[RMDB]
RNA sequence: GGGAACGACUCGAGUAGAGUCGAAAAUGUCGGCCGACGAGGUCGAGAUCCGAAAUGCGCUGAACACAGCGGUGAUCGGCGGGGUGGACCUGGUGGUGUCGGUCGGCGGGACCGGGGUGACGCCUCGGAUGAUGUCUGGGUUCGCCCAGACAUCAUCAAAAGAAACAACAACAACAAC
Reactivity to 2A3 in 0.01 (KOAc 150mM, MgCl2 10mM, bicine 150mM(pH8.5), 24C), signal-to-noise 1, nucleotides 027 to 126: u100g020u010c000g010g000c010c000g000a020c020g030a000g040g000u000c000g010a100g030a110u010c010c030g010a010a080a100u290g040c000g030c030u000g030a190a030c160a000c040a270g150c120g200g020u080g020a070u020c020g020g030c000g030g040g010g060u180g060g000a000c000c010u010g120g000u170g050g120u250g070u030c000g000g000u000c020g000g000c000g020g030g010a020c000c000g010g000g000g010u060g080a020c070g150c070c010u040c000g000
Reactivity to DMS in 0.01 (KOAc 150mM, MgCl2 10mM, bicine 150mM(pH8.5), 24C), signal-to-noise 2, nucleotides 027 to 126: u000g060u000c010g010g010c000c000g040a010c050g010a120g000g000u000c010g010a110g010a020u000c010c000g000a060a090a160u010g000c070g030c010u000g010a150a120c220a060c000a170g000c130g030g010u000g000a250u000c020g010g010c100g010g010g010g030u010g020g000a030c030c010u000g060g020u000g020g000u000g000u000c000g000g000u010c010g010g000c030g020g010g000a160c030c010g000g000g000g020u000g020a130c300g000c010c000u010c020g010
Structure probing data (2A3 and DMS) for a 177-nucleotide construct. DMS adducts were read by reverse transcription with MarathonRT. Values cover nucleotides 27 to 126. 2A3 adducts were read by reverse transcription with SuperScript II with manganese. The reactions ran in a buffer of 150 mM KOAc, 10 mM MgCl2 and 150 mM bicine (pH 8.5), at 24 C. The 2A3 profile rests on 1,338 reads.